[RMDB]
The record gives the reactivity of an RNA of 177 nucleotides to DMS.
RNA sequence: GGGAACGACUCGAGUAGAGUCGAAAAGAUAUGGAUCCGUAGUUUUGCUGUGAGAGCGAUAAGCUCUACAUCGGAAACGAUGUAGAGCUUUUGACGCUCUCCACAGCAAAACUACGGAUCCUAAGUCCAUUUCCGUAUUGUUCGCAAUACGGAAAUGAAAAGAAACAACAACAACAAC
Reactivity to DMS in 0.01 (KOAc 150mM, MgCl2 10mM, bicine 150mM(pH8.5), 24C), signal-to-noise 1, nucleotides 027 to 126: g000a120u000a300u000g010g010a000u000c000c000g020u000a020g020u020u010u000u000g030c050u000g000u010g010a080g020a010g030c000g040a120u000a030a030g020c010u000c000u020a010c000a020u020c000g030g000a190a110a210c000g020a000u000g000u000a000g020a000g030c020u000u000u000u000g010a220c120g000c020u010c000u000c090c030a000c010a080g030c000a000a000a020a000c000u000a000c000g050g000a000u000c010c000u000a010a110g010u000c060
It was measured as part of the RMDB library TTRINS. The reactions ran in a buffer of 150 mM KOAc, 10 mM MgCl2 and 150 mM bicine (pH 8.5), at 24 C.